RNA sequence: GGGAACGACUCGAGUAGAGUCGAAAAAAAUUGAAAUCGUUGGUUUACGUCCAAUCCGUAAAGCAGUUGUUACCGGAAUCGAAAUGUUCAAAAAGGAACUUGAUUCAGCAAUGGCUGGGGACAACGCAUGUACUGUCUCGUUCGCGAGACAGUACAUAAAAGAAACAACAACAACAAC
Reactivity to DMS in 0.01 (KOAc 150mM, MgCl2 10mM, bicine 150mM(pH8.5), 24C), signal-to-noise 1, nucleotides 027 to 126: a000a020a120u000u000g010a120a110a060u000c050g010u000u000g000g000u000u000u000a020c010g020u010c070c060a110a130u000c220c010g030u000a000a050a080g010c020a000g040u000u000g010u000u010a050c060c050g010g050a020a040u000c000g010a050a080a040u000g000u010u000c010a000a020a080a230a110g000g000a000a030c010u000u000g000a000u000u000c020a190g030c040a020a000u000g000g010c010u040g000g000g000g000a280c040a010a000c020g000c300